RNA sequence: GGGAACGACUCGAGUAGAGUCGAAAAGGUUUAAUCGGGUCUACACCUCUCCCUACCGAUUAAACCAGCGAAAGCGACAACACGGAGAGGAUAGGAGUGCAUGCGUCAUAACCUCCCCAUAGCAUGCACUCCAGCGAGAGCGAACAACGGGGGAGGACAUAUGCACCCGAUUCGUCGGGUGCAUAUGAAAAGAAACAACAACAACAAC
Reactivity to 2A3 in 0.01 (KOAc 150mM, MgCl2 10mM, bicine 150mM(pH8.5), 24C), signal-to-noise 1, nucleotides 027 to 156: g000g000u030u020u000a000a000u020c030g060g020g070u040c110u100a060c050a120c060c010u000c000u000c000c000c080u070a050c000c000g000a000u000u000a010a000a010c010c000a000g020c050g100a060a040a030g000c010g060a070c060a150a000c010a030c090g000g000a000g000a000g060g000a000u050a030g010g000a000g000u020g030c000a000u000g000c000g070u210c190a130u130a150a120c010c000u030c020c000c000c000a020u050a010g000c000a000u000g010c000a000c000u000c000c000a000g000c000g040a040g000a000g000c010g000a010a030c000a010a000c090g000g000g000g000g000a000g000g000a000
The record gives the reactivity of an RNA of 207 nucleotides to 2A3.
For 2A3 the reverse transcriptase was SuperScript II with manganese.